[RMDB]
RNA sequence: GGGAACGACUCGAGUAGAGUCGAAAAUCACCCCAAAUAGGAUAGCGAGGGAAGCACGCUUGAGGCUGAACCGCGAAAUAGUAUCAAGCUCACCAUGACGAAGCCUGUCGCUUGGCGUCUAAUUGGUUAAAUAAAUGAGCGACUAAGCAUGUAGUACCGCUUAUUCUAAGUUCGCUUAGAAUAAGCGAAAAGAAACAACAACAACAAC
Reactivity to 2A3 in 0.01 (KOAc 150mM, MgCl2 10mM, bicine 150mM(pH8.5), 24C), signal-to-noise 5, nucleotides 027 to 156: u080c020a100c010c010c010c010a070a100a120u210a100g070g040a040u070a050g020c030g050a200g020g000g020a010a010g020c010a010c080g030c020u010u050g020a020g040g000c000u000g010a030a010c010c000g010c010g070a030a020a010u190a010g060u070a030u130c030a020a010g000c020u050c030a030c000c000a020u040g000a020c040g030a050a010g010c000c040u060g020u030c010g000c030u020u060g000g010c010g020u000c010u030a060a070u100u040g030g000u080u110a060a070a050u140a020a050a040u150g020a010g010c020g010a010c000u010a040a040g080c060a060u140g040u130a100g070u060a080c030
Reactivity to DMS in 0.01 (KOAc 150mM, MgCl2 10mM, bicine 150mM(pH8.5), 24C), signal-to-noise 3, nucleotides 027 to 156: u000c030a170c070c020c010c030a050a130a120u000a140g010g020a180u000a110g010c050g030a170g010g010g020a230a110g010c020a060c080g020c100u000u000g030a080g000g040c010u000g040a220a300c020c030g000c020g000a060a070a210u000a100g020u000a120u000c020a040a100g030c000u000c050a080c010c010a070u000g010a300c300g000a050a030g020c010c020u000g010u010c100g020c100u000u000g020g010c000g020u000c020u000a040a150u010u000g000g030u000u020a060a080a140u000a050a070a090u000g000a040g060c020g000a050c030u000a070a150g010c020a090u010g040u010a120g030u010a120c130
This 207-nucleotide RNA was probed chemically with 2A3 and DMS. Source: RMDB library ARCHII, as collected in RNAgym. The reactions ran in a buffer of 150 mM KOAc, 10 mM MgCl2 and 150 mM bicine (pH 8.5), at 24 C. For 2A3, 4,286 sequencing reads were counted.